[RMDB]
RNA sequence: GGGAACGACUCGAGUAGAGUCGAAAAUUGGUGAAGCAACACGACGUGCAAUUGAAGCAGGGUUUGAUGGUGUUGAAAUACAUGGCGCGAAUCAUUACUUAAUUCAUCAAUUUGUAUCACCAUACUAACCGAUUGAGGGAUUCGUCCCUCAAUCGGUAAAAGAAACAACAACAACAAC
Reactivity to 2A3 in 0.01 (KOAc 150mM, MgCl2 10mM, bicine 150mM(pH8.5), 24C), signal-to-noise 4, nucleotides 027 to 126: u060u030g000g010u000g000a050a020g080c030a010a060c010a010c010g090a050c080g070u070g030c070a120a290u210u300g040a140a020g010c030a030g110g000g060u090u130u240g150a140u080g040g040u030g000u030u050g010a060a060a040u140a000c050a060u050g060g000c030g000c020g140a030a090u080c050a070u000u080a010c030u020u130a050a080u090u000c030a000u000c000a020a000u000u000u060g080u030a080u030c030a130c160c000a030u120a200c100u080a120
Reactivity to DMS in 0.01 (KOAc 150mM, MgCl2 10mM, bicine 150mM(pH8.5), 24C), signal-to-noise 2, nucleotides 027 to 126: u000u010g040g070u000g000a020a040g010c060a040a100c060a040c060g000a070c100g000u000g000c120a090a040u040u020g000a150a100g020c030a080g010g040g000u110u030u010g000a120u080g000g000u010g000u000u000g000a010a030a020u040a090c130a090u030g000g010c040g010c180g000a040a240u010c010a000u000u050a100c250u010u040a030a110u010u000c000a000u000c020a000a010u000u000u000g000u020a030u010c060a040c000c010a160u000a090c150u050a090
Chemical mapping of a 177-nucleotide RNA with 2A3 and DMS. For 2A3, 2,175 sequencing reads were counted. For DMS, 2,276 sequencing reads were counted. Reactivities are given for positions 27 through 126.